RNA sequence: GGGAACGACUCGAGUAGAGUCGAAAAUCCUAUUACUCACACUUAUCUUCAUGAUCUCAAUCAAGCCAGUUUUGGUCAGGAUGAUUCGUUUAUGACAGUAGGGGAAAUGUCUGCCACGACUAUUGACAACUGUCUUUUAUACACGGCUCCCGAACGACACCCCAGGAUUAUUCGUAAUCCUGGGGUGAAAAGAAACAACAACAACAAC
Reactivity to 2A3 in 0.01 (KOAc 150mM, MgCl2 10mM, bicine 150mM(pH8.5), 24C), signal-to-noise 3, nucleotides 027 to 156: u020c000c000u000a080u060u220a060c060u110c040a080c020a020c050u090u110a120u110c040u130u060c060a100u080g060a090u030c020u010c130a170a130u040c030a070a030g040c020c050a080g020u010u050u080u120g060g020u020c030a020g040g030a040u070g020a000u080u030c040g030u040u030u130a100u090g020a020c020a040g030u090a080g030g050g040g040a030a080a040u120g010u010c030u070g240c050c030a020c070g030a000c040u090a030u070u110g040a060c050a100a020c060u000g010u000c000u020u050u030u020a090u020a050c030a010c030g020g050c030u010c020c020c050g030a070a020c020g090a030
Reactivity to DMS in 0.01 (KOAc 150mM, MgCl2 10mM, bicine 150mM(pH8.5), 24C), signal-to-noise 1, nucleotides 027 to 156: u000c000c000u000a080u030u000a070c040u000c030a120c130a080c010u010u000a070u000c010u000u000c020a050u000g020a040u000c020u010c040a080a070u000c080a080a140g030c040c070a150g000u010u000u000u000g010g030u000c010a020g010g010a050u000g000a000u010u000c010g000u000u000u010a070u010g020a060c190a030g000u000a040g020g040g040g030a060a060a090u010g020u000c050u000g000c080c050a100c080g000a080c070u000a090u000u010g000a080c030a090a180c010u000g030u000c020u000u010u010u000a070u000a100c030a030c000g000g000c040u000c000c010c010g020a040a030c020g040a280